RNA sequence: GGGAACGACUCGAGUAGAGUCGAAAACCGUAGGCGUACUAGUAGCUGCAGCCUUUACUUGGAUUUACAGGUUUCGAAAGAGACCUGUUGUCAGUAAAGGAACUACUGCCGAAAGUACGCCUAAACGGAAACUGAAGAUUCUUCGGAAUCUUCAGAACUCGACUCUUAAGUUCGCUUAAGAGUCGAGAAAAGAAACAACAACAACAAC
Reactivity to 2A3 in 0.01 (KOAc 150mM, MgCl2 10mM, bicine 150mM(pH8.5), 24C), signal-to-noise 1, nucleotides 027 to 156: c000c000g010u010a000g000g000c000g050u000a010c000u000a030g070u090a020g040c200u060g000c050a010g000c010c000u010u000u000a000c010u050u140g120g010a060u300u230u070a020c010a010g000g030u010u010u020c030g060a190a130a100g000a040g010a010c000c000u000g000u000u000g000u000c000a000g000u010a000a000a010g010g030a000a000c040u250a020c000u010g000c040c000g000a000a010a010g000u000a000c000g000c010c010u000a000a000a000c000g030g020a170a070a060c000u000g000a000a000g000a000u000u000c020u030u080c300g090g000a020a000u000c000u000u000c000a000g000a000a000